About this RNA: Source: RMDB library OK3TST, as collected in RNAgym. This 207-nucleotide RNA was probed chemically with 2A3 and DMS. For 2A3, 4,301 sequencing reads were counted. For DMS the reverse transcriptase was MarathonRT. The RNA was probed in 150 mM KOAc, 10 mM MgCl2 and 150 mM bicine (pH 8.5) at 24 C. For 2A3 the reverse transcriptase was SuperScript II with manganese.
RNA sequence: GGGAACGACUCGAGUAGAGUCGAAAACAUGGUAUGGCCUCGCAUCCGGCCUACCAACAGAAUCAACAACUUGGGAUGCGGUGGGCGAGAGCCCUAAGAAGGAGUCUCCCCGCCUGGGGAGCUCCGUAUGACUUAAUGUAUUACCAGGCGCAUACAAAUACUAAUGAUAGUUCGCUAUCAUUAGUAUAAAAGAAACAACAACAACAAC
Reactivity to 2A3 in 0.01 (KOAc 150mM, MgCl2 10mM, bicine 150mM(pH8.5), 24C), signal-to-noise 4, nucleotides 027 to 156: c030a050u060g000g000u070a100u300g020g020c000c010u050c010g000c000a000u000c010c010g000g000c010c000u010a000c030c000a010a010c060a020g130a060a090u190c050a040a110c020a030a040c090u130u170g040g000g000a010u010g000c000g000g030u060g000g000g000c020g010a030g010a040g010c000c000c000u000a030a030g030a020a050g010g010a000g010u040c010u010c020c000c000c000g000c010c000u010g000g000g000g000a000g000c000u000c000c000g000u020a040u030g030a010c020u060u110a110a040u200g100u180a130u100u110a030c000c010a000g020g000c010g000c050a030u110a230c060a040a140
Reactivity to DMS in 0.01 (KOAc 150mM, MgCl2 10mM, bicine 150mM(pH8.5), 24C), signal-to-noise 3, nucleotides 027 to 156: c040a200u010g020g020u000a020u000g070g010c000c010u000c040g020c060a110u010c000c070g020g010c010c080u000a000c010c010a020a300c130a150g000a120a170u000c060a060a130c050a100a110c090u010u010g030g010g000a050u000g030c040g000g050u000g010g020g000c020g010a270g010a230g000c020c010c020u000a040a070g000a130a190g000g010a040g010u000c020u000c000c000c000c010g030c160c160u030g000g020g010g010a060g020c000u000c000c010g000u000a010u000g010a100c050u000u000a040a120u010g000u000a100u000u000a080c010c010a060g000g020c020g020c070a090u000a090c070a130a070